[RMDB]
RNA sequence: GGGAACGACUCGAGUAGAGUCGAAAAGGGGUCCUAAGCAUCGAUCUCUACAAAGAGCAUCGAUCUGGGACUGAAGCCUCCACGGUCCCAGGGAGCUCAAAAAGGAGGGAGCUUAGGACGGAGGCACCCAAAAGUAUUUAUGUUCGCAUAAAUACAAUCUAACGCUCUUGUUCGCAAGAGCGUUAGAAAAAGAAACAACAACAACAAC
Reactivity to 2A3 in 0.01 (KOAc 150mM, MgCl2 10mM, bicine 150mM(pH8.5), 24C), signal-to-noise 2, nucleotides 027 to 156: g040g010g090g030u000c000c000u010a000a000g000c000a080u300c030g070a070u030c000u010c030u060a100c100a110a210a000g020a000g010c010a010u300c040g010a000u010c000u000g000g020g000a000c000u010g030a030a020g010c000c000u000c000c000a000c000g010g000u000c010c010c000a010g000g000g010a010g000c000u000c020a090a160a020a010a030g060g000a010g010g040g010a000g010c000u010u000a000g000g000a010c000g000g000a000g000g000c020a040c000c000c000a040a240a000a030g000u000a000u000u000u000a000u000g060u050u110c300g000c100a000u000a000a000a020u020a010c010a000a050